[RMDB]
RNA sequence: GGGAACGACUCGAGUAGAGUCGAAAAGAAACCAUUUUAAUAUUAGCAUUUCCAUCACCGUUCUCUGAUAAAGAGGCAUUACUAGUCAUGGACAGCUUGCUAGUCACAGUACGGUCAUAUUAAAAGACCUCGAGUAUAAUUUCGAUUAUACUCGAGGAAAAGAAACAACAACAACAAC
Reactivity to 2A3 in 0.01 (KOAc 150mM, MgCl2 10mM, bicine 150mM(pH8.5), 24C), signal-to-noise 9, nucleotides 027 to 126: g080a070a080a010c020c020a050u060u060u010u080a110a080u060a050u090u100a040g040c080a090u000u040u090c040c020a050u090c040a040c030c020g020u130u020c010u000c000u000g070a100u170a190a160a020g050a030g030g000c010a010u050u100a060c070u060a060g040u060c050a080u060g080g050a070c030a030g060c020u030u060g020c010u030a020g010u020c020a030c020a110g060u090a020c030g010g000u030c020a010u050a030u070u120a090a070a030a010g070a040
Reactivity to DMS in 0.01 (KOAc 150mM, MgCl2 10mM, bicine 150mM(pH8.5), 24C), signal-to-noise 3, nucleotides 027 to 126: g010a130a100a150c060c020a130u030u020u010u010a050a050u000a060u000u020a150g000c030a150u010u010u030c050c060a070u020c100a030c030c060g020u000u000c000u010c080u010g000a100u020a010a110a090g000a110g010g000c030a070u000u020a060c100u010a120g010u030c140a070u020g000g000a030c210a060g000c040u000u010g000c000u000a110g020u000c080a030c150a020g000u030a000c020g000g000u020c110a020u000a040u010u000a040a020a020a110g010a220

Structure probing data (2A3 and DMS) for a 177-nucleotide construct. 2A3 adducts were read by reverse transcription with SuperScript II with manganese. Conditions: 150 mM KOAc, 10 mM MgCl2 and 150 mM bicine (pH 8.5), 24 C. For 2A3, 11,424 sequencing reads were counted.